[RMDB]
RNA sequence: GGGAACGACUCGAGUAGAGUCGAAAAGAUAUGGAGGUCUGCAAGGAGCUCCAACUAAGACAGCUUUCUCGGAAACGAGAAAGUCGAGUUGGAGAACUACUCCGACCAGACCUCCUAAGUCAAAACUCCUAACGCUUGUUCGCAAGCGUUAGGAGAAGUUUAGUCAAUACUUCGGUAUUGACUAAACAAAAGAAACAACAACAACAAC
Reactivity to 2A3 in 0.01 (KOAc 150mM, MgCl2 10mM, bicine 150mM(pH8.5), 24C), signal-to-noise 2, nucleotides 027 to 156: g000a000u010a000u050g010g000a000g000g000u000c000u000g030c060a110a240g000g010a010g010c000u010c000c000a000a000c010u060a080a010g000a000c000a010g010c000u010u010u000c000u000c000g010g000a000a000a010c000g000a000g000a010a000a010g020u010c000g010a010g010u000u000g010g020a010g000a010a010c020u180a050c000u080c000c000g000a000c000c020a000g000a000c000c000u000c000c000u000a000a000g000u000c000a010a010a060a120c000u000c000c000u000a000a000c000g000c000u020u030g030u140u130c290g010c200a000a000g000c000g000u000u000a000g010g000a000g000a000a000
Reactivity to DMS in 0.01 (KOAc 150mM, MgCl2 10mM, bicine 150mM(pH8.5), 24C), signal-to-noise 1, nucleotides 027 to 156: g010a050u000a090u000g000g030a080g040g010u010c030u040g040c010a140a300g000g000a010g060c010u060c000c000a010a010c010u000a290a240g000a080c300a090g000c000u000u000u000c000u010c000g010g000a090a000a180c000g010a030g000a010a000a030g040u000c010g000a030g010u000u010g000g010a050g010a100a090c100u000a300c040u010c000c000g010a300c300c040a120g000a060c000c000u000c000c000u000a000a030g010u060c060a070a030a080a180c000u040c000c000u000a000a000c000g010c000u000u000g000u000u010c300g100c040a010a080g000c010g010u000u000a000g010g000a000g000a000a010
Chemical mapping of a 207-nucleotide RNA with 2A3 and DMS. The reactions ran in a buffer of 150 mM KOAc, 10 mM MgCl2 and 150 mM bicine (pH 8.5), at 24 C. DMS adducts were read by reverse transcription with MarathonRT. The data come from the RNA Mapping Database (RMDB), library RNAMAK.